Structure probing data (DMS and 2A3) for a 207-nucleotide construct. For 2A3, 3,333 sequencing reads were counted. The DMS profile rests on 3,625 reads. DMS adducts were read by reverse transcription with MarathonRT. The RNA was probed in 150 mM KOAc, 10 mM MgCl2 and 150 mM bicine (pH 8.5) at 24 C. It was measured as part of the RMDB library M2RFPK.

[RMDB]
RNA sequence: GGGAACGACUCGAGUAGAGUCGAAAAAUACUUCUCAGGAUGGCGCGUUGCAGUCCAACAAGAUGCAGGGACUGUACAGAAUUUUCCUAUACCUCGAGUCGGGUUUGGAAUCUAAGGUUGACUCGCUAAAACUUUACGUGGUUCGCCACGUAAAGAACAUGUAUUUGCUGUUCGCAGCAAAUACAUGAAAAGAAACAACAACAACAAC
Reactivity to DMS in 0.01 (KOAc 150mM, MgCl2 10mM, bicine 150mM(pH8.5), 24C), signal-to-noise 2, nucleotides 027 to 156: a130u020a050c070u000u010c020u010c050a180g030g010a140u010g000g020c000g030c100g000u010u010g000c010a040g000u010c040c010a150a150c070a090a110g010a150u000g000c090a170g030g020g040a050c010u030g030u000a090c120a100g010a080a090u000u000u000u000c010c010u020a130u020a060c080c020u000c050g010a050g060u010c060g010g030g030u010u000u020g030g010a060a070u000c070u010a090a040g010g020u000u000g020a050c050u000c000g010c100u020a050a050a100a090c010u010u000u000a010c000g020u010g000g030u000u020c290g020c020c000a010c020g000u010a000a010a010g010a060a110
Reactivity to 2A3 in 0.01 (KOAc 150mM, MgCl2 10mM, bicine 150mM(pH8.5), 24C), signal-to-noise 1, nucleotides 027 to 156: a000u090a040c020u050u020c040u020c040a050g110g030a090u070g050g040c060g000c070g100u080u060g020c010a010g000u000c010c000a030a060c050a060a170g140a130u260g050c090a100g000g040g000a000c000u000g010u030a010c010a010g200a150a060u030u040u050u000c000c000u050a040u050a070c020c010u020c030g010a010g010u020c020g000g000g000u050u070u080g020g010a030a010u000c040u090a120a110g110g050u120u170g060a020c000u020c040g030c000u040a090a070a050a090c000u000u000u000a000c000g000u010g020g030u030u060c080g050c060c000a000c000g000u000a000a000a000g000a000a000